[RMDB]
RNA sequence: GGGAACGACUCGAGUAGAGUCGAAAACGGCAAAAAAGCAAACUUGACCACCAAGGAUAAAAGAGAUCUUAUCCAAGGAUGCAAAAGAUAAUCUCACUUUUGACACCCACUGACCUCGAACUUAAAGAAAACCGAGACUACUUCGGUAGUCUCGGAACGUGUUUAAUAACUUCGGUUAUUAAACACGAAAAGAAACAACAACAACAAC
Reactivity to DMS in 0.01 (KOAc 150mM, MgCl2 10mM, bicine 150mM(pH8.5), 24C), signal-to-noise 2, nucleotides 027 to 156: c080g020g000c060a010a040a030a060a020a100g010c000a100a090a090c070u010u000g000a200c220c010a080c030c050a080a300g010g010a090u000a030a020a020a110g000a220g000a110u000c030u000u000a050u000c050c020a080a260g050g010a070u010g020c030a000a080a020a030g010a110u000a040a080u010c030u000c030a100c040u000u000u000u010g020a170c060a040c000c000c000a110c100u000g000a090c040c000u000c000g000a040a090c090u000u000a060a070a100g000a040a030a080a150c000c010g010a030g010a010c010u000a020c000u000u020c240g100g040u000a010g010u000c000u000c000g000g000a000a000
Reactivity to 2A3 in 0.01 (KOAc 150mM, MgCl2 10mM, bicine 150mM(pH8.5), 24C), signal-to-noise 8, nucleotides 027 to 156: c020g040g000c040a020a030a020a040a060a030g060c050a110a080a060c040u080u070g040a090c020c010a010c020c020a050a030g010g000a020u020a050a050a040a020g160a010g010a040u040c020u040u030a010u010c020c010a020a040g000g020a030u060g010c010a010a030a050a020g030a060u110a140a170u070c030u020c040a050c030u030u020u030u050g050a050c010a050c010c000c020a050c070u060g050a060c010c030u040c040g040a080a080c050u090u110a150a100a080g060a040a110a040a010c000c000g000a000g000a000c000u000a000c010u020u040c130g040g000u000a000g000u000c000u000c000g000g000a000a000
This 207-nucleotide RNA was probed chemically with DMS and 2A3. The data come from the RNA Mapping Database (RMDB), library M2RFPK. Conditions: 150 mM KOAc, 10 mM MgCl2 and 150 mM bicine (pH 8.5), 24 C. DMS (dimethyl sulfate) methylates the pairing face of unpaired adenines and cytosines. 2A3 adducts were read by reverse transcription with SuperScript II with manganese.